[RMDB]
RNA sequence: GGGAACGACUCGAGUAGAGUCGAAAAAUAAAGGAGGUCAGGGUCAGGAGCCCCGCCCUGAACCCAGGAUAACCCUCAAAGUCGGGGGGCAACCCGCGACCGUUAGAGGACUGGUAAAAAUAAUGAAUUCCACUAAUUACUUCGGUAAUUAGUGGAAAAAAGAAACAACAACAACAAC
Reactivity to DMS in 0.01 (KOAc 150mM, MgCl2 10mM, bicine 150mM(pH8.5), 24C), signal-to-noise 1, nucleotides 027 to 126: a060u000a060a070a070g000g000a140g000g020u000c000a010g000g010g010u000c070a090g000g000a240g000c050c020c030c120g000c090c000c000u000g000a090a080c100c000c000a050g010g000a090u010a130a100c300c010c000u000c000a050a140a200g000u000c000g010g000g010g000g000g000c300a060a120c000c000c000g010c000g000a020c010c040g020u000u000a220g000a020g010g000a060c000u000g000g010u010a000a070a100a100a120u000a050a180u000g000a100a120